[RMDB]
Structure probing data (DMS and 2A3) for a 177-nucleotide construct. For DMS the reverse transcriptase was MarathonRT. The reactions ran in a buffer of 150 mM KOAc, 10 mM MgCl2 and 150 mM bicine (pH 8.5), at 24 C. In probing experiments dimethyl sulfate is read out at A N1 and C N3, which are open when not base-paired.
RNA sequence: GGGAACGACUCGAGUAGAGUCGAAAAUGAGGCAGGGGCUGAAGCCCUCAUAUGGAACGUGGCAGGGAUGAGCAGGCCAUCUGGAAUCCAGACUUAAAAGCAUCAGUCACCCAGACAUUGAUUUGAGCAAGUCUCCUAAAUUCGUUUAGGAGACUUGAAAAGAAACAACAACAACAAC
Reactivity to DMS in 0.01 (KOAc 150mM, MgCl2 10mM, bicine 150mM(pH8.5), 24C), signal-to-noise 5, nucleotides 027 to 126: u000g010a060g010g020c080a140g000g000g000g000c040u010g010a110a170g020c030c020c030u010c070a030u010a090u000g010g010a050a080c120g000u000g010g000c040a080g010g010g000a090u000g000a100g030c040a070g000g010c040c040a040u000c030u000g010g000a120a100u000c040c030a070g000a090c150u000u000a070a080a050a110g020c040a040u010c050a060g010u000c050a100c010c010c020a150g000a050c100a060u010u000g010a110u010u000u000g000a140g000
Reactivity to 2A3 in 0.01 (KOAc 150mM, MgCl2 10mM, bicine 150mM(pH8.5), 24C), signal-to-noise 3, nucleotides 027 to 126: u080g010a040g060g000c050a020g050g000g000g000c020u080g080a100a030g010c010c020c000u010c010a100u160a050u110g060g010a110a100c070g010u030g020g000c030a030g060g040g020a090u100g010a080g040c030a010g020g030c000c010a030u020c040u060g020g050a060a020u000c010c030a000g030a030c010u060u080a060a140a020a000g020c000a050u040c010a020g020u020c020a070c070c020c020a040g030a070c020a040u110u200g070a090u130u100u200g060a050g090